[RMDB]
Chemical mapping of a 207-nucleotide RNA with 2A3 and DMS. The 2A3 profile rests on 3,772 reads. Reactivities are rounded to 0.1 and cut off at 0 and 3. The RNA was probed in 150 mM KOAc, 10 mM MgCl2 and 150 mM bicine (pH 8.5) at 24 C. DMS adducts were read by reverse transcription with MarathonRT.
RNA sequence: GGGAACGACUCGAGUAGAGUCGAAAAGCUCCUUCAGGUGAACGAUCUCGGUUGUUUCUCUGAAAGCAUGAUCACCCCGUCCGAUGCGGAAGUUCGUGCUUCCGUCGAACGCGAAAGUCGGACGGCGAAAACGAGUUACCGUUCGCGGUAACUCGAAACUUAAGUAGCUGUUCGCAGCUACUUAAGUAAAAGAAACAACAACAACAAC
Reactivity to 2A3 in 0.01 (KOAc 150mM, MgCl2 10mM, bicine 150mM(pH8.5), 24C), signal-to-noise 5, nucleotides 027 to 156: g030c040u040c040c040u040u070c060a060g010g020u050g080a050a020c020g020a060u040c040u090c230g130g000u010u000g000u000u020u000c010u000c000u030g040a040a030a000g040c030a060u150g050a070u150c040a090c000c010c000c000g010u010c000c000g000a000u040g010c010g000g050a020a010g010u100u300c150g110u300g060c000u010u010c010c010g000u000c020g040a150a050c060g020c030g150a130a050a000g030u010c000g000g000a000c010g010g020c030g060a060a060a010a050c000g000a000g010u000u000a000c000c010g010u040u070c280g010c010g100g010u000a000a000c000u000c000g000a010a000
Reactivity to DMS in 0.01 (KOAc 150mM, MgCl2 10mM, bicine 150mM(pH8.5), 24C), signal-to-noise 2, nucleotides 027 to 156: g040c040u010c030c010u000u000c030a050g050g010u000g010a040a040c000g010a030u000c010u000c100g030g030u000u000g000u010u010u010c020u000c010u000g020a060a070a130g030c040a110u000g000a090u000c040a150c030c010c000c000g000u000c010c040g030a120u000g000c010g000g020a050a030g020u000u010c250g000u010g000c010u000u000c000c010g050u010c070g030a080a140c110g000c090g010a120a110a150g030u010c010g010g000a060c000g040g050c000g000a100a080a100a240c010g000a020g020u000u010a010c010c000g040u000u000c290g040c030g030g020u000a000a010c010u020c000g000a010a040